[RMDB]
RNA sequence: GGGAACGACUCGAGUAGAGUCGAAAACUCGAAUCUUUCGAGAUUCGAGACUCUCGAAGUGUCAAUAAGAUCGAAAAGAUCGCCGAGCAUAAAAUAGACUCAAUGCUGCUUGAUUCGUCAAGCAGAACAAGCAUUACGUUUUCGAACGUAAUGCUUGAAAAGAAACAACAACAACAAC
Reactivity to DMS in 0.01 (KOAc 150mM, MgCl2 10mM, bicine 150mM(pH8.5), 24C), signal-to-noise 6, nucleotides 027 to 126: c000u000c000g010a000a010u000c020u000u010u020c130g010a020g010a020u000u000c010g010a050g020a060c110u000c010u010c010g040a180a110g010u010g010u000c050a110a110u000a120a160g000a020u000c000g010a110a070a090a180g000a010u000c010g000c150c070g000a090g010c230a080u000a030a050a080a090u010a070g010a090c050u000c070a110a120u010g000c010u000g010c000u000u000g010a020u000u000c190g010u000c000a000a000g010c000a010g010a050a110
Reactivity to 2A3 in 0.01 (KOAc 150mM, MgCl2 10mM, bicine 150mM(pH8.5), 24C), signal-to-noise 6, nucleotides 027 to 126: c000u000c000g010a010a000u000c010u050u130u180c240g090a010g000a010u000u000c010g000a000g010a020c020u000c000u000c030g040a250a060g070u040g040u110c030a040a070u120a220a090g000a010u010c010g060a140a180a080a120g000a000u000c010g000c030c020g040a030g010c030a090u150a110a190a110a070u130a100g060a080c010u010c090a030a130u140g020c010u000g000c000u010u010g000a020u050u050c140g050u020c100a000a000g000c010a000g000a000a020